Overview
Chemical mapping of a 177-nucleotide RNA with 2A3 and DMS. For DMS the reverse transcriptase was MarathonRT.
[RMDB]
RNA sequence: GGGAACGACUCGAGUAGAGUCGAAAAAGAGGACUUUUAACGGUGAAAUAUUUACGGAGAAAGAUGCAAGCUCAAAGAACUGGAGUCCUCAAAUGCAUUAUUGCCGCAUUAUCGCACCCGGAAGCUCCGCUCCGUAAAAUUUCGAUUUUACGGAGCGAAAAGAAACAACAACAACAAC
Reactivity to 2A3 in 0.01 (KOAc 150mM, MgCl2 10mM, bicine 150mM(pH8.5), 24C), signal-to-noise 5, nucleotides 027 to 126: a000g040a010g000g020a050c010u050u060u070u110a180a020c040g020g030u050g050a020a100a010u170a090u080u190u150a070c050g030g020a060g060a050a150a000g100a020u080g040c040a030a100g050c000u010c020a070a260a000g040a100a040c070u120g050g070a000g030u030c020c010u020c000a020a030a000u040g000c010a020u020u110a110u210u300g040c010c010g010c030a030u050u060a030u140c080g000c040a050c000c010c000g050g020a030a010g030c000u030c050
Reactivity to DMS in 0.01 (KOAc 150mM, MgCl2 10mM, bicine 150mM(pH8.5), 24C), signal-to-noise 3, nucleotides 027 to 126: a100g020a040g000g020a070c030u030u000u010u030a080a150c150g010g000u020g030a110a070a060u030a040u040u010u010a050c040g020g010a070g000a110a030a100g030a030u000g000c040a030a140g000c030u020c040a090a090a080g010a070a050c170u010g000g000a050g000u010c040c060u040c060a040a060a110u010g000c010a000u000u010a080u020u020g000c050c030g000c090a020u000u020a030u010c180g000c000a050c020c010c000g000g000a080a070g000c060u000c080
The RNA was probed in 150 mM KOAc, 10 mM MgCl2 and 150 mM bicine (pH 8.5) at 24 C.